[RMDB]
RNA sequence: GGGAACGACUCGAGUAGAGUCGAAAAGUCUCCCGAUUCGUCGGGAGACCGAGAAAUUCAGGUGAUUUGCUACCUUUAAGUGCAGCUAGAAAAUCAAAGGAAACACCAUGGCGUUCGCGCCAUGGAAUCCAUGGUAGAGUUUCGACUCUACCAUGGAAAAAGAAACAACAACAACAAC
Reactivity to 2A3 in 0.01 (KOAc 150mM, MgCl2 10mM, bicine 150mM(pH8.5), 24C), signal-to-noise 2, nucleotides 027 to 126: g010u030c000u010c000c000c000g010a020u040u060c160g040u000c020g090g000g010a010g000a000c000c010g010a010g100a030a140a040u190u170c060a020g010g030u040g070a280u050u040u080g020c010u000a000c020c000u110u230u290a030a030g000u000g000c010a000g000c030u140a030g180a110a100a020a070u190c090a080a060a090g060g000a060a040a010c020a010c020c000a000u000g000g000c000g010u010u070c180g020c000g000c030c010a000u010g000g010a000a000
Reactivity to DMS in 0.01 (KOAc 150mM, MgCl2 10mM, bicine 150mM(pH8.5), 24C), signal-to-noise 3, nucleotides 027 to 126: g000u000c010u010c000c000c000g000a030u000u030c140g020u010c000g020g010g000a020g000a010c000c050g010a070g000a300a100a110u000u000c080a030g010g000u010g030a160u010u000u000g000c020u000a040c030c020u010u000u020a040a010g000u000g010c040a010g020c260u010a110g000a040a040a090a080u020c070a030a060a090g030g000a050a050a140c170a130c020c000a000u000g010g010c000g040u000u010c200g020c020g000c010c000a000u000g010g000a080a040
About this RNA:
The record gives the reactivity of an RNA of 177 nucleotides to 2A3 and DMS. The RNA was probed in 150 mM KOAc, 10 mM MgCl2 and 150 mM bicine (pH 8.5) at 24 C. Values are in units of 0.01, from 0 to 300, in steps of 10. For DMS the reverse transcriptase was MarathonRT. The 2A3 profile rests on 2,035 reads.